RNA sequence: GGGAACGACUCGAGUAGAGUCGAAAAGAUAUGGAUACGCUAUGAAGAUGGUGUGCAACAGCUCGGAAACGAGACAUGCACAUUUCAUUGGAGCGUAUCCUAAGUCAAAGGUGAGUUCGCUCACCAACUAGUAUCCUUAGUUCGCUAAGGAUACUAGAAAAGAAACAACAACAACAAC
Reactivity to 2A3 in 0.01 (KOAc 150mM, MgCl2 10mM, bicine 150mM(pH8.5), 24C), signal-to-noise 9, nucleotides 027 to 126: g020a020u080a020u140g000g000a000u020a000c010g000c020u070a180u300g050a030a020g020a020u030g010g000u000g010u000g000c010a100a100c040a210g040c000u000c000g020g020a050a050a040c010g010a000g030a060c030a060u060g000c000a000c000a010u040u110u150c010a010u000u030g030g010a000g010c010g000u000a000u010c000c000u000a030a020g010u020c050a140a060a050g000g000u010g010a010g000u040u230c300g030c130u000c000a010c000c000a000a000
Reactivity to DMS in 0.01 (KOAc 150mM, MgCl2 10mM, bicine 150mM(pH8.5), 24C), signal-to-noise 4, nucleotides 027 to 126: g010a040u010a300u000g000g000a010u000a000c010g020c000u000a210u010g010a150a180g010a010u000g010g030u000g000u000g000c000a020a070c270a170g010c000u000c000g000g000a080a090a210c010g010a010g000a030c080a150u000g000c000a010c000a000u000u010u010c010a010u000u000g000g000a020g010c000g000u000a000u000c000c000u000a010a060g000u000c040a080a100a120g010g010u010g010a020g020u000u010c270g010c000u000c000a000c000c020a040a080
The data come from the RNA Mapping Database (RMDB), library TTRDEL. Structure probing data (2A3 and DMS) for a 177-nucleotide construct. The RNA was probed in 150 mM KOAc, 10 mM MgCl2 and 150 mM bicine (pH 8.5) at 24 C. 2A3 adducts were read by reverse transcription with SuperScript II with manganese. For DMS, 20,408 sequencing reads were counted.